[RMDB]
RNA sequence: GGGAACGACUCGAGUAGAGUCGAAAACUGCCGCCGGCCCAGGGGAGGCAUCGUGGUGACGUAGGCUCCGGACGUAGCAAGGACCUGGGUCCUGGCACCCGCGCGGCUCUGCCUCUUCCAGCCAGUCCGGAUUGAUACGAUUCGUCGUAUCAAUCCGAAAAGAAACAACAACAACAAC
Reactivity to DMS in 0.01 (KOAc 150mM, MgCl2 10mM, bicine 150mM(pH8.5), 24C), signal-to-noise 3, nucleotides 027 to 126: c110u040g020c010c030g030c040c120g040g050c000c040c070a100g000g010g030g020a090g010g010c020a100u030c100g000u000g010g020u040g010a130c070g010u010a090g000g000c040u000c000c020g010g000a090c090g000u010a050g010c140a120a090g020g000a140c050c020u030g000g000g000u000c000c020u020g000g010c040a100c070c050c060g040c090g010c130g020g000c030u010c040u050g000c040c020u000c020u000u000c010c060a100g000c030c020a070g000u010c060
Reactivity to 2A3 in 0.01 (KOAc 150mM, MgCl2 10mM, bicine 150mM(pH8.5), 24C), signal-to-noise 6, nucleotides 027 to 126: c010u060g040c030c030g020c010c030g010g030c010c010c030a070g020g010g010g010a050g000g020c010a050u120c080g090u090g060g060u080g040a090c080g070u080a060g030g050c030u020c000c010g030g020a040c040g070u080a040g070c060a090a070g080g020a060c010c030u030g050g030g000u040c010c030u050g020g000c010a010c000c000c000g010c010g000c030g050g000c020u010c030u030g010c000c010u030c000u060u040c010c010a030g020c010c020a010g030u010c030